[RMDB]
Source: RMDB library OK2TRN, as collected in RNAgym. The record gives the reactivity of an RNA of 177 nucleotides to 2A3 and DMS. High 2A3 reactivity points to a flexible backbone, as in loops and unpaired stretches. 2A3 adducts were read by reverse transcription with SuperScript II with manganese. The reactions ran in a buffer of 150 mM KOAc, 10 mM MgCl2 and 150 mM bicine (pH 8.5), at 24 C. For 2A3, 1,371 sequencing reads were counted. For DMS, 4,180 sequencing reads were counted.
RNA sequence: GGGAACGACUCGAGUAGAGUCGAAAAUGUCGGUCGACGGCGGACCGGGAAUGUACGAGUCCGGUCCGUUCGGGCAGGGCAGCCCUACUCCGGUGCCAAUCGCCGUGGAGAGCUUCCACGCUCUGCAAAAAGGCGUGGAAUUCGUUCCACGCCUUUUAAAAGAAACAACAACAACAAC
Reactivity to 2A3 in 0.01 (KOAc 150mM, MgCl2 10mM, bicine 150mM(pH8.5), 24C), signal-to-noise 1, nucleotides 027 to 126: u030g000u000c010g010g000u040c020g020a300c000g010g010c000g000g010a000c000c010g000g050g060a060a150u190g040u280a090c080g040a050g050u000c000c000g000g000u030c040c000g010u020u000c030g000g000g000c000a030g090g040g000c020a040g010c000c060c000u060a080c030u020c040c020g060g000u000g040c050c080a070a040u210c010g010c040c000g000u040g000g090a000g010a020g010c010u190u160c020c000a040c050g020c000u000c020u020g040c050a090
Reactivity to DMS in 0.01 (KOAc 150mM, MgCl2 10mM, bicine 150mM(pH8.5), 24C), signal-to-noise 3, nucleotides 027 to 126: u000g020u000c030g000g040u000c040g010a110c030g000g010c000g000g010a010c000c000g000g000g010a030a080u010g020u000a100c300g010a140g020u000c010c010g010g010u010c000c000g020u000u000c050g020g010g020c010a040g000g000g030c020a050g010c040c020c010u000a100c070u010c070c020g010g020u000g010c100c170a080a100u000c060g010c050c000g000u000g020g000a040g000a100g000c060u000u010c090c100a110c140g000c040u000c000u010g000c140a070